[RMDB]
Structure probing data (DMS and 2A3) for a 177-nucleotide construct. Source: RMDB library OK1LIB, as collected in RNAgym.
RNA sequence: GGGAACGACUCGAGUAGAGUCGAAAACUAUUUAUAGACAGAACAGUGGAAAACGUAUAUCGCUAUAAACCUUAAACGCCGAUUCUUCCAGUCGUACCAUUCCACAUAGGCGAGGCAUAAGCGAAAGCACUAGGCCAGGAUUCGUCCUGGCCUAGUGAAAAGAAACAACAACAACAAC
Reactivity to DMS in 0.01 (KOAc 150mM, MgCl2 10mM, bicine 150mM(pH8.5), 24C), signal-to-noise 2, nucleotides 027 to 126: c060u010a020u000u010u020a000u020a110g000a030c060a110g000a050a040c170a090g010u020g000g000a080a050a020a020c140g030u020a060u010a030u000c010g050c000u000a020u000a040a010a160c160c050u010u020a040a060a130c130g010c070c030g010a060u020u000c050u010u000c030c020a060g000u000c020g000u020a120c030c070a210u040u000c020c010a050c040a040u010a110g030g000c120g040a080g020g010c150a100u010a030a090g000c070g000a050a070a080g000
Reactivity to 2A3 in 0.01 (KOAc 150mM, MgCl2 10mM, bicine 150mM(pH8.5), 24C), signal-to-noise 3, nucleotides 027 to 126: c000u020a090u010u090u050a090u040a000g060a040c070a030g060a120a010c010a060g020u070g090g080a080a140a020a000c000g030u040a100u000a010u230c040g040c020u010a030u050a100a050a040c010c030u060u100a060a170a000c110g120c160c030g040a050u060u000c010u010u000c010c000a000g000u000c000g020u040a050c020c020a020u080u040c000c010a060c020a060u020a070g020g000c020g000a040g010g000c070a020u050a130a000g020c030g020a070a000a000g060
About this RNA:
DMS adducts were read by reverse transcription with MarathonRT. For 2A3, 1,713 sequencing reads were counted. The reactions ran in a buffer of 150 mM KOAc, 10 mM MgCl2 and 150 mM bicine (pH 8.5), at 24 C.